[RMDB]
RNA sequence: GGGAACGACUCGAGUAGAGUCGAAAAAAUAAUCCCGCCCUGCUGUCCAUAUCAACCCGCCAAGAAGCUCCCAGAGCCGAGCGGCUUGGAUUAGGGCGGGAUCUCUCAUCAGUCACCAUAGUAACUCACUAUAAGGUAUGUUCGCAUACCUUAUAGUAAAAGAAACAACAACAACAAC
Reactivity to 2A3 in 0.01 (KOAc 150mM, MgCl2 10mM, bicine 150mM(pH8.5), 24C), signal-to-noise 9, nucleotides 027 to 126: a000a000u220a010a010u010c000c000c000g000c010c000c000u040g050c070u170g020u030c000c000a020u040a060u220c040a050a080c010c000c000g010c010c010a090a050g090a090a010g040c010u010c070c180c090a090g010a000g030c000c020g010a030g010c000g000g000c010u020u050g000g000a010u060u220a010g000g000g000c000g000g000g000a000u000c000u000c000u000c000a120u030c010a020g090u050c020a040c070c010a060u080a100g100u060a110a070c030u020c080
Reactivity to DMS in 0.01 (KOAc 150mM, MgCl2 10mM, bicine 150mM(pH8.5), 24C), signal-to-noise 7, nucleotides 027 to 126: a060a040u020a090a050u000c010c010c000g010c010c000c000u000g030c270u040g010u010c000c000a030u010a080u020c180a100a150c300c010c010g000c020c080a080a090g000a120a160g010c000u000c010c130c150a170g000a040g010c040c060g000a120g010c040g010g000c110u000u000g010g010a020u000u030a010g000g000g020c010g000g000g000a000u000c020u010c020u000c010a100u020c070a080g000u000c050a070c040c040a080u010a080g010u000a050a090c080u010c120